[RMDB]
RNA sequence: GGGAACGACUCGAGUAGAGUCGAAAAGCCUACACUUCGGCACCUACUUUUUUAUAUACAUAGAUAAAUACAAUUGAGUUUAACUCAAGAAUUUCGUUUGUAUAUUGUCAGAAAUAGUGGGCGUUUAGGGUAUUAAAUAUUUCGAUAUUUAAUACCCAAAAGAAACAACAACAACAAC
Reactivity to 2A3 in 0.01 (KOAc 150mM, MgCl2 10mM, bicine 150mM(pH8.5), 24C), signal-to-noise 6, nucleotides 027 to 126: g040c000c000u040a030c040a040c070u090u110c060g050g020c020a050c010c030u090a070c070u160u180u080u040u110u050a020u030a000u010a020c010a000u070a060g030a050u120a130a160a010u160a160c080a100a150u010u010g000a010g020u110u230u220a170a040c010u010c000a000a010g080a080a060u040u080u050c050g100u070u120u020g010u000a010u000a020u010u080g090u090c060a060g060a050a050a080u120a060g010u010g010g030g020c040g010u040u050u210a070
Reactivity to DMS in 0.01 (KOAc 150mM, MgCl2 10mM, bicine 150mM(pH8.5), 24C), signal-to-noise 1, nucleotides 027 to 126: g020c000c000u010a040c090a140c190u000u030c050g000g000c010a040c080c010u000a040c030u030u020u000u000u020u020a050u000a010u000a060c010a040u010a120g000a050u010a080a020a030u030a150c130a100a150u000u000g000a000g020u010u040u030a060a040c010u000c000a010a030g010a180a020u040u000u000c020g000u020u000u000g010u000a010u010a040u010u040g000u030c170a140g000a000a030a010u020a000g020u000g000g010g000c030g030u010u000u030a140